[RMDB]
RNA sequence: GGGAACGACUCGAGUAGAGUCGAAAAGGACUAACUUCGGUUAGUCCAAAAAUCCUAAGUCGAGAGGCUGCUGACAUGAGCCUAUCGGAAACGAUAGCGCUCAACAGCAGCAGCUACCCACCUCGAUAUGGAAAAAAGGUGCGUUUCGACGCACCAAGAUUGUUAAUCACUUCGGUGAUUAACAAUCAAAAGAAACAACAACAACAAC
Reactivity to 2A3 in 0.01 (KOAc 150mM, MgCl2 10mM, bicine 150mM(pH8.5), 24C), signal-to-noise 3, nucleotides 027 to 156: g010g000a000c000u010a010a000c010u030u120c140g020g000u000u000a000g020u000c000c000a000a000a000a000a000u040c020c000u030a100a020g020u010c000g000a000g000a010g030g000c000u000g020c000u010g010a180c010a120u060g000a000g020c010c000u000a000u010c000g040g000a060a050a040c010g000a000u000a000g120c180g000c050u010c010a010a020c030a010g010c000a000g000c000a000g000c000u020a040c060c050c000a070c010c000u000c000g000a010u020a060u090g010g040a090a040a030a050a030a090g000g020u020g010c010g000u040u050u170c210g100a020c000g000c000a000c000c000a000a010
Reactivity to DMS in 0.01 (KOAc 150mM, MgCl2 10mM, bicine 150mM(pH8.5), 24C), signal-to-noise 1, nucleotides 027 to 156: g050g020a030c000u000a020a010c000u000u010c290g090g020u000u000a010g020u020c000c000a000a010a040a090a140u000c000c000u000a100a280g010u000c010g010a050g000a240g020g000c020u000g000c000u010g010a130c070a300u010g000a020g000c000c000u000a000u000c050g020g000a220a100a300c000g000a010u000a040g000c160g030c030u000c000a000a090c040a140g000c000a010g020c000a010g000c010u010a000c010c000c050a300c170c000u000c000g010a030u000a300u000g000g010a000a060a030a090a300a180g000g020u000g010c000g020u000u000u000c260g000a100c000g000c010a000c000c000a010a000
Notes: Chemical mapping of a 207-nucleotide RNA with 2A3 and DMS. DMS adducts were read by reverse transcription with MarathonRT. The 2A3 profile rests on 3,521 reads. Values cover nucleotides 27 to 156. High 2A3 reactivity points to a flexible backbone, as in loops and unpaired stretches. The reactions ran in a buffer of 150 mM KOAc, 10 mM MgCl2 and 150 mM bicine (pH 8.5), at 24 C. It was measured as part of the RMDB library RNAMAK.